[RMDB]
RNA sequence: GGGAACGACUCGAGUAGAGUCGAAAAGAUAUGGACCCUGGACAUGAUCCCUAUCGGAAACGAUAGAGCGAUCAACAGCCAGGUCCUAAGUCAAAGAUAGUGGAUGACUUCGGUCAUCCACUAUCAACUAAAGCGCAUAGUUCGCUAUGCGCUUUAGAAAAGAAACAACAACAACAAC
Reactivity to 2A3 in 0.01 (KOAc 150mM, MgCl2 10mM, bicine 150mM(pH8.5), 24C), signal-to-noise 1, nucleotides 027 to 126: g000a000u090a030u080g010g000a050c050c120c130u030g050g030a020c040a160u110g000a010u000c010c000c000u000a020u020c040g000g040a100a060a020c010g020a010u010a020g100a020g060c140g020a000u000c000a020a030c030a020g040c010c010a000g000g000u000c000c000u000a080a010g040u010c020a050a020a140g000a010u000a000g000u040g030g020a010u010g000a000c020u060u160c300g020g030u030c010a000u010c000c000a000c000u000a000u010c000a000a010
Reactivity to DMS in 0.01 (KOAc 150mM, MgCl2 10mM, bicine 150mM(pH8.5), 24C), signal-to-noise 4, nucleotides 027 to 126: g010a060u000a300u000g010g010a020c130c070c060u000g000g000a060c080a180u000g000a000u000c000c010c000u000a010u000c000g010g000a140a070a120c000g000a020u000a000g010a060g020c170g010a010u000c000a040a050c250a140g000c000c010a020g000g000u000c000c000u010a020a120g010u010c030a130a090a110g010a010u000a010g010u000g000g000a010u000g000a020c000u000u020c210g020g000u000c000a010u000c000c010a000c000u000a000u010c000a070a160
The data come from the RNA Mapping Database (RMDB), library TTRDEL.
Chemical mapping of a 177-nucleotide RNA with 2A3 and DMS.
Values cover nucleotides 27 to 126.
The RNA was probed in 150 mM KOAc, 10 mM MgCl2 and 150 mM bicine (pH 8.5) at 24 C.
The 2A3 profile rests on 1,932 reads.
DMS adducts were read by reverse transcription with MarathonRT.